Record summary
Structure probing data (2A3) for a 207-nucleotide construct. The 2A3 profile rests on 701 reads. Source: RMDB library VIROID, as collected in RNAgym.
[RMDB]
RNA sequence: GGGAACGACUCGAGUAGAGUCGAAAAGAAACAACUGAAGCUUCAACGCCUUUUUUUCCAAUCUUCUUUAGCACCGGGCUAGGGAGUAAGCCCGUGGAACCUUAGUAUUGUUCCCUCGGGACUUACUUGUGGUUCCUGUGGUGCACUCCUGACCCUGACCAGUUGAUUACUUCGGUAAUCAACUGGUAAAAGAAACAACAACAACAAC
Reactivity to 2A3 in 0.01 (KOAc 150mM, MgCl2 10mM, bicine 150mM(pH8.5), 24C), signal-to-noise 2, nucleotides 027 to 156: g040a000a110a000c060a010a000c020u130g030a130a000g050c050u210u190c180a080a020c050g000c010c040u000u000u100u050u030u040u090c060c020a160a220u040c150u110u090c020u120u170u140a110g100c010a110c100c020g010g000g070c030u020a030g050g000g000a000g030u060a110a000g020c000c000c000g010u010g000g000a000a000c020c030u010u020a000g010u010a090u010u130g110u100u080c040c000c010u080c170g040g020g000a000c010u010u000a000c000u040u060g120u100g060g000u000u020c000c010u000g040u140g030g000u020g000c020a010c010u010c000c000u020g040a070c000c000c020u000g040